[RMDB]
RNA sequence: GGGAACGACUCGAGUAGAGUCGAAAACUUGGCUAUGACACUGUUCGGAUCGGGAACCUUGUUAGUGUGGCCCAGCCAUUUGGCCUGAGCCUGAAGGAGACUGGGUUUGAACAUGUAUCCUUUGAUGCAUUGCCUCAUGCUUCGGCAUGAGGCAAUGAAAAGAAACAACAACAACAAC
Reactivity to 2A3 in 0.01 (KOAc 150mM, MgCl2 10mM, bicine 150mM(pH8.5), 24C), signal-to-noise 2, nucleotides 027 to 126: c010u080u050g080g060c050u110a040u190g020a030c010a000c070u030g000u030u020c020g020g020a020u010c010g020g030g040a020a020c000c000u000u030g130u130u150a230g030u130g070u120g200g000c030c010c000a000g000c000c060a150u240u070u230g020g000c000c000u040g000a010g040c030c000u010g040a020a010g010g020a120g000a010c030u150g060g100g000u000u000u080g020a020a000c000a020u130g000u030a070u100c000c010u090u000u230g090a080u110g020
Reactivity to DMS in 0.01 (KOAc 150mM, MgCl2 10mM, bicine 150mM(pH8.5), 24C), signal-to-noise 2, nucleotides 027 to 126: c030u000u020g010g010c270u010a080u010g010a030c040a050c110u000g000u000u000c030g010g000a020u000c030g000g030g030a300a290c050c010u090u000g030u020u010a110g000u000g020u010g030g030c020c020c020a040g000c020c000a300u000u000u010g010g000c100c070u010g020a020g010c030c000u010g010a020a030g010g000a060g060a270c010u000g010g020g000u000u000u000g000a050a010c040a030u020g070u000a040u000c030c130u000u000u000g000a140u000g020